[RMDB]
Source: RMDB library OK2TST, as collected in RNAgym. This 177-nucleotide RNA was probed chemically with 2A3 and DMS. For DMS, 15,019 sequencing reads were counted. For DMS the reverse transcriptase was MarathonRT. 2A3 adducts were read by reverse transcription with SuperScript II with manganese.
RNA sequence: GGGAACGACUCGAGUAGAGUCGAAAAAUAAACAGCCUGUAAAUCCGAGAGACUAGGUACCUAGUAACAUGAAAACGAGCACAUGGCUCGCGCAUUGAGUAUCUGCGAACAGGAUGUAGUAUAUUCAGUGUAGUACAAGAUUCGUCUUGUACUACACAAAAGAAACAACAACAACAAC
Reactivity to 2A3 in 0.01 (KOAc 150mM, MgCl2 10mM, bicine 150mM(pH8.5), 24C), signal-to-noise 9, nucleotides 027 to 126: a000u140a010a120a000c020a010g030c010c010u020g050u060a050a080a100u040c070c040g040a060g000a010g030a150c020u020a030g090g040u170a120c010c020u010a020g030u040a050a070c040a110u130g090a060a060a000a030c010g010a000g010c010a060c070a300u140g280g000c000u000c010g000c000g000c010a030u030u090g010a010g030u020a020u020c010u020g020c010g010a030a010c000a010g010g020a010u040g020u030a040g050u020a030u010a030u110u080c060a040
Reactivity to DMS in 0.01 (KOAc 150mM, MgCl2 10mM, bicine 150mM(pH8.5), 24C), signal-to-noise 9, nucleotides 027 to 126: a070u010a070a090a080c030a050g000c010c000u000g010u000a080a100a130u010c060c070g010a120g000a140g000a070c040u000a020g010g010u010a070c130c020u000a040g000u000a070a100c120a090u000g000a060a050a100a100c020g000a010g010c010a150c220a100u010g020g000c000u000c010g010c070g010c050a030u000u000g000a070g010u000a020u000c030u000g000c040g010a130a050c030a020g000g000a040u010g010u000a060g010u010a030u000a040u000u000c050a130